[RMDB]
RNA sequence: GGGAACGACUCGAGUAGAGUCGAAAAUCUGAAGAAGAAUCGAGCGCGGAACGCAUCGAUAGCUCUGCCCUCUGCGGCCGCCCGGCCCCGAACUCAUCGGUGUGCUCGGAGCUCGAUUUUCCUAGGCAAGCUAGUUGAUAUUCGUAUCAACUAGCUUAAAAGAAACAACAACAACAAC
Reactivity to DMS in 0.01 (KOAc 150mM, MgCl2 10mM, bicine 150mM(pH8.5), 24C), signal-to-noise 5, nucleotides 027 to 126: u010c020u010g020a140a090g000a070a040g000a020a010u000c000g000a010g000c000g000c080g000g010a020a030c000g010c000a010u000c010g010a010u000a030g000c050u000c030u000g010c050c010c030u000c090u000g030c300g020g010c010c090g010c130c140c180g010g000c010c020c020c060g000a030a050c040u000c190a020u000c000g030g010u000g010u000g000c020u000c000g010g010a300g000c010u000c010g010a020u000u000u000u000c010c000u010a180g020g010c280
Reactivity to 2A3 in 0.01 (KOAc 150mM, MgCl2 10mM, bicine 150mM(pH8.5), 24C), signal-to-noise 1, nucleotides 027 to 126: u020c010u050g050a060a060g070a030a000g000a020a080u010c000g000a000g000c030g010c130g160g020a080a030c010g020c000a010u030c000g020a020u020a020g020c060u040c090u140g040c040c030c000u040c040u090g070c090g020g000c000c010g040c050c060c020g040g000c000c000c000c030g010a030a020c020u040c090a010u010c020g000g010u010g010u010g010c000u000c050g080g010a030g010c010u000c020g010a000u000u010u000u020c000c000u010a030g040g110c040
Chemical mapping of a 177-nucleotide RNA with DMS and 2A3. For DMS the reverse transcriptase was MarathonRT. For 2A3 the reverse transcriptase was SuperScript II with manganese. Source: RMDB library OK2TST, as collected in RNAgym. DMS (dimethyl sulfate) methylates the pairing face of unpaired adenines and cytosines.